[RMDB]
RNA sequence: GGGAACGACUCGAGUAGAGUCGAAAACAAAAGGAUGGUGUUGAAAACACUCCUCCUCACUAUUUUACUCUUGGAUGCAAAAUUUUAACGCUCACCCCACGCAACAAGUGGAGUGGCGUUUCUGACUCGGCGGGACAGUUCGCUGUCCCGAAAAGAAACAACAACAACAAC
Reactivity to DMS in 0.01 (KOAc 150mM, MgCl2 10mM, bicine 150mM(pH8.5), 24C), signal-to-noise 4, nucleotides 027 to 129: c110a130a100a020a000g080g000a000u100g020g020u030g000u000u050g010a160a070a120a100c000a090c010u010c030c060u020c000c000u030c150a100c110u020a100u010u080u050u100a000c080u060c020u060u080g020g010a070u050g020c080a000a050a030a040u050u010u020u020a000a050c040g010c020u050c000a050c000c000c000c000a020c000g020c220a110a100c300a090a130g010u010g010g040a050g000u000g000g000c000g030u000u000u000c050u010g030a120c130u000c110g060g050
Reactivity to 2A3 in 0.01 (KOAc 150mM, MgCl2 10mM, bicine 150mM(pH8.5), 24C), signal-to-noise 7, nucleotides 027 to 129: c050a000a110a020a000g060g000a080u130g000g060u030g060u060u100g150a070a030a040a010c030a000c000u050c000c020u000c000c000u070c010a070c010u150a150u070u210u060u120a100c030u020c020u050u140g080g030a100u110g070c070a020a130a200a210u080u110u100u100a040a000c000g000c020u080c080a000c010c000c010c000a000c000g040c010a030a280c040a300a000g010u000g000g000a000g000u000g000g020c000g000u000u010u000c000u010g050a050c040u010c050g040g010